[RMDB]
RNA sequence: GGGAACGACUCGAGUAGAGUCGAAAAAAACUCUAAGUAGCUUUUUAGAAGCAAUGAAGUUAGACCAGGUAGAAUAUUACAGCUUCUUUUCCAAAAUGUUAUCUGGUGAUAGCAGAAUGAUAAUGAACCAGCAGAUAAUAUUCGUAUUAUCUGCUGGAAAAGAAACAACAACAACAAC
Reactivity to DMS in 0.01 (KOAc 150mM, MgCl2 10mM, bicine 150mM(pH8.5), 24C), signal-to-noise 3, nucleotides 027 to 126: a020a010a060c020u000c020u030a120a120g030u000a020g020c010u000u000u010u000u000a010g010a030a010g010c010a140a100u010g000a110a110g000u020u010a090g000a060c020c010a020g000g000u000a040g010a150a100u010a060u000u010a070c120a090g010c000u000u000c000u000u000u000u000c010c020a040a040a020a060u010g000u000u000a020u000c020u010g010g020u010g010a080u000a040g000c110a070g010a100a080u000g010a090u010a060a090u000g000a130a150
Reactivity to 2A3 in 0.01 (KOAc 150mM, MgCl2 10mM, bicine 150mM(pH8.5), 24C), signal-to-noise 2, nucleotides 027 to 126: a000a010a050c110u080c090u210a300a140g020u090a020g120c000u180u090u000u030u130a050g060a060a000g000c010a030a050u200g020a030a060g060u050u150a020g060a080c010c020a010g090g000u050a010g080a270a100u110a080u260u200a050c020a020g000c010u000u000c000u000u040u000u050c020c000a010a130a030a100u050g000u080u030a010u010c020u060g080g030u050g100a020u060a010g070c050a030g040a300a040u110g090a110u120a180a140u300g050a090a190
Notes:
The data come from the RNA Mapping Database (RMDB), library OK2TST. The record gives the reactivity of an RNA of 177 nucleotides to DMS and 2A3. DMS adducts were read by reverse transcription with MarathonRT. The RNA was probed in 150 mM KOAc, 10 mM MgCl2 and 150 mM bicine (pH 8.5) at 24 C.